[RMDB]
This 207-nucleotide RNA was probed chemically with 2A3. Values cover nucleotides 27 to 156. It was measured as part of the RMDB library OK3TST.

RNA sequence: GGGAACGACUCGAGUAGAGUCGAAAAACACACAUCGUAGUCGCGAUACGUGUGCUAAUAUGCCGUAUGCGGUCAUGGUCACAGUUAUAGUCAGUGUUAUAAUGCACUAUGACACCAUAAUUAACGCCACGUAAUUGGCGCAUGCGUGCCACAACCGCCAGGUCACCAGCUUCGGCUGGUGACCUGGAAAAGAAACAACAACAACAAC
Reactivity to 2A3 in 0.01 (KOAc 150mM, MgCl2 10mM, bicine 150mM(pH8.5), 24C), signal-to-noise 1, nucleotides 027 to 156: a000c000a000c000a010c000a050u000c000g080u030a200g300u180c110g040c010g000a010u110a160c120g000u000g000u010g020c000u000a000a010u040a020u220g040c000c000g020u050a040u070g040c050g020g090u140c100a080u120g000g000u060c040a100c000a200g010u000u060a000u110a120g050u050c020a030g000u030g010u210u080a150u100a290a120u300g050c030a030c120u020a130u080g000a000c000a000c010c010a040u040a100a050u170u160a020a020c000g020c000c000a030c140g070u130a240a150u120u150g020g020c000g000c000a000u030g000c000g020u130g000c000c000a120c010a000a060c000c000g050